The data come from the RNA Mapping Database (RMDB), library RFMREP. The record gives the reactivity of an RNA of 177 nucleotides to 2A3 and DMS. For DMS, 9,306 sequencing reads were counted. 2A3 adducts were read by reverse transcription with SuperScript II with manganese.

RNA sequence: GGGAACGACUCGAGUAGAGUCGAAAAGAAUCCAUUUAAUUCAAUCACAGGUUGACCGUGGAAUCCGUUUGGAGUCUAAUUGUUUUAUACAAAAUGGGGUUUGGGAAUACCUUUCGAGGUAUUCCCACCACAAUGAUAGAUUCGUCUAUCAUUGUGGAAAAGAAACAACAACAACAAC
Reactivity to 2A3 in 0.01 (KOAc 150mM, MgCl2 10mM, bicine 150mM(pH8.5), 24C), signal-to-noise 5, nucleotides 027 to 126: g050a020a060u030c010c020a020u080u110u140a140a100u070u070c040a010a060u070c030a060c040a230g020g110u120u110g080a070c020c030g020u030g020g030a040a040u030c020c020g060u120u160u290g040g010a050g030u000c020u070a050a080u050u020g020u030u120u030u060a130u020a050c040a040a100a030a060u070g020g000g000g050u060u110u060g030g010g000a000a000u010a000c000c000u030u030u100c170g030a000g000g000u000a010u000u000c010c000c000a000
Reactivity to DMS in 0.01 (KOAc 150mM, MgCl2 10mM, bicine 150mM(pH8.5), 24C), signal-to-noise 6, nucleotides 027 to 126: g000a120a110u000c010c010a070u010u000u010a070a090u000u000c030a030a070u010c060a120c130a100g020g010u010u000g010a060c170c080g000u000g000g000a050a040u000c040c030g020u000u010u010g030g000a060g000u000c050u000a080a100u000u000g000u010u010u010u010a090u010a080c080a040a030a060a070u000g010g000g010g010u000u010u000g010g010g000a020a010u000a000c000c000u000u000u000c180g010a000g010g000u000a010u000u000c000c000c000a010